[RMDB]
RNA sequence: GGGAACGACUCGAGUAGAGUCGAAAACGCCUUUGCAGCCAUAAAGGCGCCAACAAACCGAGGAUCUUGGGUGCUGACGCCCUCCCGGUGCAGCUGCAGGGUCUGGUCCUUGUAAAUCUCGGCUCGGAGGUGCGUCUCGGCCAGGCGUCGGCGCAGGCCAUCCAGGUGUGUUCGCACACCUGGAUGGAAAAGAAACAACAACAACAAC
Reactivity to 2A3 in 0.01 (KOAc 150mM, MgCl2 10mM, bicine 150mM(pH8.5), 24C), signal-to-noise 1, nucleotides 027 to 156: c040g050c060c000u110u120u240g050c080a080g060c060c000a060u300a100a300a130g000g000c010g000c000c000a060a100c030a070a200a000c010c030g000a010g070g070a300u130c030u130u130g160g080g030u120g150c110u040g050a030c010g000c000c000c000u010c000c000c000g040g050u110g040c010a000g000c020u120g000c000a020g010g010g010u170c240u300g090g050u170c050c000u000u000g000u010a070a070a060u080c070u040c000g050g000c020u050c000g010g000a010g000g000u210g010c000g030u000c000u000c000g080g070c010c000a030g000g010c000g050u030c020g000g000c000g000c060a010g100g000